[RMDB]
RNA sequence: GGGAACGACUCGAGUAGAGUCGAAAAAUCCUCAGGUUCAUAAGCGUGAUGAUUGGGUGUUCAUGCUCCAUGCAUGACAGGUGCCUCCUUUGAACCUUGUUACGACCUUGGCACAUUACCCAUCUGAAAAAGACGUUCGCGUUCGCGCGAACGUCAACAUUUCCCAUUCCUUCGGGAAUGGGAAAUGAAAAGAAACAACAACAACAAC
Reactivity to 2A3 in 0.01 (KOAc 150mM, MgCl2 10mM, bicine 150mM(pH8.5), 24C), signal-to-noise 3, nucleotides 027 to 156: a000u030c000c010u020c010a000g010g010u000u000c010a010u060a290a040g020c080g160u080g090a070u040g010a020u120u270g020g000g010u050g060u130u060c010a010u010g000c020u120c220c030a120u250g000c000a000u000g000a020c010a000g000g060u000g010c000c000u040c010c010u020u020u020g000a010a000c000c000u000u060g080u040u090a130c110g040a110c020c080u060u060g000g020c010a010c000a000u090u150a020c000c000c000a010u000c030u060g040a060a040a040a070a070g010a000c000g010u000u000c020g000c000g060u040u050c250g000c000g010c020g100a030a000c000g000u000c000a000a000
Reactivity to DMS in 0.01 (KOAc 150mM, MgCl2 10mM, bicine 150mM(pH8.5), 24C), signal-to-noise 1, nucleotides 027 to 156: a140u000c000c040u000c040a070g010g000u000u010c000a080u000a070a100g000c120g000u010g040a160u000g000a060u000u010g010g020g060u000g000u000u000c000a040u000g000c010u000c200c220a150u000g060c000a020u000g000a010c070a180g030g000u000g020c000c020u030c090c070u000u010u000g000a030a030c020c030u000u000g000u010u000a130c180g020a080c110c050u010u000g060g020c020a030c040a220u000u000a040c010c000c020a110u000c040u010g000a070a060a080a180a200g000a010c000g030u000u000c010g090c000g040u000u020c300g020c000g120c020g010a000a010c020g010u010c010a030a060

Structure probing data (2A3 and DMS) for a 207-nucleotide construct. The data come from the RNA Mapping Database (RMDB), library M2RFOK. Conditions: 150 mM KOAc, 10 mM MgCl2 and 150 mM bicine (pH 8.5), 24 C. The 2A3 profile rests on 1,608 reads. For DMS, 2,354 sequencing reads were counted. For DMS the reverse transcriptase was MarathonRT.